[RMDB]
RNA sequence: GGGAACGACUCGAGUAGAGUCGAAAAGGCGACAAGUUCGCUUGUCGCCACGGGGUCCAGCCUGGAAAGGCUGGAGGUAUUGGAAUGGUCGGGCCGCGAUUCAACGCGGGACAUUCGUGUCCCGCAACAUAUGUGGACUUUUCGAAGUCCACAUAUGAAAAGAAACAACAACAACAAC
Reactivity to 2A3 in 0.01 (KOAc 150mM, MgCl2 10mM, bicine 150mM(pH8.5), 24C), signal-to-noise 6, nucleotides 027 to 126: g000g000c010g000a010c010a020a000g010u030u080c170g070c120u000u000g000u000c000g000c000c000a000c020g030g000g010g010u000c000c000a000g000c000c010u040g090g110a170a100a010g010g000c000u010g010g040a000g020g010u120a140u110u250g080g040a080a070u050g050g050u110c020g000g000g000c040c000g010c030g030a020u080u070c050a090a040c120g000c000g000g000g000a010c000a010u050u080c220g040u020g000u010c000c000c000g000c000a000a010
Reactivity to DMS in 0.01 (KOAc 150mM, MgCl2 10mM, bicine 150mM(pH8.5), 24C), signal-to-noise 7, nucleotides 027 to 126: g010g020c010g010a000c000a010a000g010u000u010c230g020c000u000u000g000u000c010g010c000c000a030c100g010g000g000g010u000c010c000a010g000c000c000u000g010g040a110a140a020g010g010c000u000g000g000a010g000g010u010a100u010u000g010g010a070a060u000g010g010u010c050g000g000g000c040c030g000c070g010a080u000u000c080a080a120c190g010c000g000g000g010a010c000a040u000u010c170g010u000g010u000c000c000c000g020c000a040a050